[RMDB]
Chemical mapping of a 177-nucleotide RNA with DMS and 2A3. The DMS profile rests on 5,583 reads. The 2A3 profile rests on 1,681 reads.
RNA sequence: GGGAACGACUCGAGUAGAGUCGAAAACUAAGUCUAACCUUAGUAGGAAGUAAGGUAGGCGUGUGAACUUCCGAACGGCAUGUGAUUGUGAAGGGCCGGAUCUAAUUUAGUACAUGGGAAAAGUUACAUACAUGAUCUCGUUCGCGAGAUCAUGUAUAAAAGAAACAACAACAACAAC
Reactivity to DMS in 0.01 (KOAc 150mM, MgCl2 10mM, bicine 150mM(pH8.5), 24C), signal-to-noise 3, nucleotides 027 to 126: c020u010a050a060g010u010c020u070a050a120c130c020u000u000a030g010u020a120g040g000a090a140g010u000a090a040g000g000u020a020g010g000c000g000u030g040u000g020a100a030c090u000u010c000c000g010a080a070c100g000g000c040a090u010g010u020g000a110u010u000g000u040g020a110a100g000g000g020c010c020g020g010a090u030c060u020a060a050u010u010u010a060g010u010a080c110a060u000g000g000g000a030a050a040a110g000u000u020a090c100
Reactivity to 2A3 in 0.01 (KOAc 150mM, MgCl2 10mM, bicine 150mM(pH8.5), 24C), signal-to-noise 3, nucleotides 027 to 126: c020u030a130a000g010u000c060u020a070a260c030c000u050u060a020g050u060a040g070g170a200a050g080u060a000a040g020g020u030a030g040g010c070g020u040g040u030g050a010a020c030u060u030c000c000g020a060a020c050g010g000c010a030u070g050u040g090a170u130u130g030u080g170a070a030g000g010g000c010c010g030g000a030u020c000u000a130a060u070u100u050a020g070u060a050c050a060u060g030g060g010a010a010a050a060g060u120u070a070c040